Structure probing data (DMS) for a 177-nucleotide construct. It was measured as part of the RMDB library TTRINS. Reactivities are rounded to 0.1 and cut off at 0 and 3.
RNA sequence: GGGAACGACUCGAGUAGAGUCGAAAAGAUAUGGAAUCGUGCAUGGGCGCAGGGAAAUCACCCUAAUGUCGGAAACGACAUUAGGGUGACACCCUGAACUACGCUCUGUGAUGCGAUUCCUAAGUCAGAUAUGUGAUGACUUCGGUCAUCACAUAUCAAAAGAAACAACAACAACAAC
Reactivity to DMS in 0.01 (KOAc 150mM, MgCl2 10mM, bicine 150mM(pH8.5), 24C), signal-to-noise 1, nucleotides 027 to 126: g000a010u010a300u000g030g010a010a040u010c020g150u000g000c010a030u010g000g040g000c060g000c030a000g020g000g000a070a080a300u010c000a050c000c000c000u020a000a000u000g010u030c020g020g000a120a120a300c030g010a000c000a000u000u000a020g000g000g000u000g000a000c180a200c030c000c000u000g000a100a120c170u030a300c040g010c020u000c000u020g020u000g000a060u000g000c010g000a000u000u000c030c010u000a030a040g000u000c090a050